RNA sequence: GGGAACGACUCGAGUAGAGUCGAAAAACUCAUACCUUGGGGGAGGACAACCCGGGGAACUGAAACAUCUAAGUACCCGGAGGAGAAGAAAUCAACUGCGAGAUUCCCCGAGUAGCGGCGAGCGAAAGAUUAACAGUUCGUUCGCGAACUGUUAAUCAAAAGAAACAACAACAACAAC
Reactivity to 2A3 in 0.01 (KOAc 150mM, MgCl2 10mM, bicine 150mM(pH8.5), 24C), signal-to-noise 1, nucleotides 027 to 126: a000c020u040c020a060u130a130c000c020u030u030g010g010g000g000g010a020g040g020a050c000a040a080c020c000c000g000g000g000g000a010a000c010u010g030a130a110a060c070a130u070c010u050a040a000g000u000a020c000c000c000g030g000a020g000g050a120g030a120a030g050a050a140a010u100c060a040a070c020u110g080c110g050a030g010a130u010u030c000c000c000c010g000a010g020u040a030g060c040g060g010c040g010a020g030c040g020a080a040a040
Reactivity to DMS in 0.01 (KOAc 150mM, MgCl2 10mM, bicine 150mM(pH8.5), 24C), signal-to-noise 3, nucleotides 027 to 126: a050c020u000c010a130u010a130c140c070u000u000g000g020g000g030g010a070g000g010a120c050a130a160c050c000c010g000g010g000g020a070a070c090u010g000a090a160a140c250a120u010c050u010a090a060g000u020a160c000c000c010g000g000a090g010g010a110g000a180a100g000a030a070a030u010c120a110a110c160u040g020c060g010a200g010a280u020u000c000c000c000c020g000a020g010u020a060g020c030g010g050c080g030a050g030c040g000a090a110a030

Notes:
Structure probing data (2A3 and DMS) for a 177-nucleotide construct. For 2A3 the reverse transcriptase was SuperScript II with manganese. The 2A3 profile rests on 3,135 reads.